[RMDB]
RNA sequence: GGGAACGACUCGAGUAGAGUCGAAAAGGAUGUCGUGAGACAUCCACUCCGUCUACGGACGGAGAGGUCAUGCUUCGGCAUGACCAACUGUGUCGUGAGACACAGAGAGUAAGACUACGGUCUUACUCAACGUUCGCUACGGCGAACGACCGAGCUCGUACGCGAGCUCGGAACGUUGGUACGUGAGUACCAACGACGAGCUUACGUGAGUAAGCUCGAAGGUCCUCUUCGGAGGACCAGACGUUGGCCUCGACGUGUCGAGGUGUAGUCGGAGGUUCGCCUCCGACAAAAGAAACAACAACAACAAC
Reactivity to DMS in 0.01 (KOAc 150mM, MgCl2 10mM, bicine 150mM(pH8.5), 24C), signal-to-noise 2, nucleotides 027 to 266: g010g000a010u000g020u000c000g000u050g010a250g000a000c000a010u000c000c000a130c000u000c010c000g030u010c000u000a100c130g020g020a000c000g020g010a010g000a090g000g000u010c000a000u000g010c000u000u020c290g000g010c000a000u000g000a020c000c010a050a050c000u000g000u000g000u000c010g010u000g010a170g000a040c000a000c010a000g000a150g000a030g010u000a000a030g000a030c000u000a130c230g030g010u000c000u000u000a000c000u000c020a090a090c030g000u000u010c010g020c030u010a100c200g020g010c000g010a000a010c000g000a070c010c010g010a030g010c000u000c020g020u020a070c130g030c050g010a020g030c000u000c010g020g000a070a060c020g020u000u000g000g000u000a000c010g000u010g020a160g030u000a030c000c010a000a000c000g000a110c030g010a000g010c000u000u000a010c010g000u030g000a120g020u000a020a000g000c000u000c000g000a090a100g030g010u000c000c000u000c010u000u040c130g020g010a000g000g020a010c000c000a010g010a110c140g000u000u020g010g000c070c010u000c000g000a030c050g020u010g010u000c000g010a000g010g020u010g000u020a070
Reactivity to 2A3 in 0.01 (KOAc 150mM, MgCl2 10mM, bicine 150mM(pH8.5), 24C), signal-to-noise 4, nucleotides 027 to 266: g010g000a000u010g000u010c010g020u070g070a110g000a030c000a000u020c000c000a000c010u000c000c010g000u000c010u020a130c300g100g000a000c000g010g010a010g010a020g000g000u000c000a000u020g010c000u050u080c260g110g000c000a000u010g000a000c000c000a010a070c000u000g000u000g010u010c010g030u030g140a080g010a020c000a000c000a000g040a000g000a000g030u000a000a000g000a000c000u030a030c300g120g000u000c000u000u000a000c000u000c000a000a050c010g000u000u000c000g000c010u030a030c290g110g010c000g000a000a000c000g000a010c000c000g000a000g000c000u010c020g040u060a030c260g010c010g110a000g020c010u010c000g000g000a060a010c020g010u000u010g010g000u010a010c030g070u070g110a050g020u000a010c000c000a000a000c010g010a050c010g010a000g000c000u000u000a000c010g060u060g080a090g020u020a000a000g000c000u010c000g000a020a010g000g000u000c000c010u030c010u040u110c220g100g000a000g010g000a000c000c000a000g030a010c070g030u050u090g040g000c000c000u010c020g020a030c050g200u210g130u170c020g000a000g030g000u040g030u040a020